[RMDB]
Chemical mapping of a 177-nucleotide RNA with 2A3 and DMS.
Values are in units of 0.01, from 0 to 300, in steps of 10.
The reactions ran in a buffer of 150 mM KOAc, 10 mM MgCl2 and 150 mM bicine (pH 8.5), at 24 C.
For 2A3, 2,139 sequencing reads were counted.
It was measured as part of the RMDB library TTRDEL.

RNA sequence: GGGAACGACUCGAGUAGAGUCGAAAAGAUAUGGACAACUACCCACCGCUGUCAACAGCUUGGACCUCGGAAACGAGCUAGCUGGACAGCGAGGUUGUCCUAAGUCAAAGCAGCCUUCGGGCUGCAACUACCCUCUGGUGUUCGCACCAGAGGGUAGAAAAGAAACAACAACAACAAC
Reactivity to 2A3 in 0.01 (KOAc 150mM, MgCl2 10mM, bicine 150mM(pH8.5), 24C), signal-to-noise 2, nucleotides 027 to 126: g080a050u270a180u180g010g030a010c010a010a010c000u130a200c000c020c040a000c000c020g030c000u010g000u000c050a190a180c020a300g040c000u050u090g130g080a240c020c020u000c010g050g030a080a070a120c000g000a010g080c000u000a010g000c020u000g000g030a000c000a000g010c010g000a010g000g000u010u020g000u000c000c000u050a130a030g130u120c100a090a090a080g000c000a000g020c000c050u120u210c250g100g020g010c020u010g000c000a000a010
Reactivity to DMS in 0.01 (KOAc 150mM, MgCl2 10mM, bicine 150mM(pH8.5), 24C), signal-to-noise 2, nucleotides 027 to 126: g010a100u030a200u000g000g010a030c000a020a050c020u000a080c020c020c020a300c080c000g000c000u000g000u000c000a110a140c000a000g010c010u000u030g020g020a130c250c010u020c010g000g010a100a110a140c010g000a010g050c010u000a020g000c020u000g000g000a020c000a030g010c000g000a000g000g020u000u000g010u000c000c000u020a080a080g040u000c150a100a100a220g020c000a000g000c000c000u000u010c240g070g000g000c000u000g040c010a000a030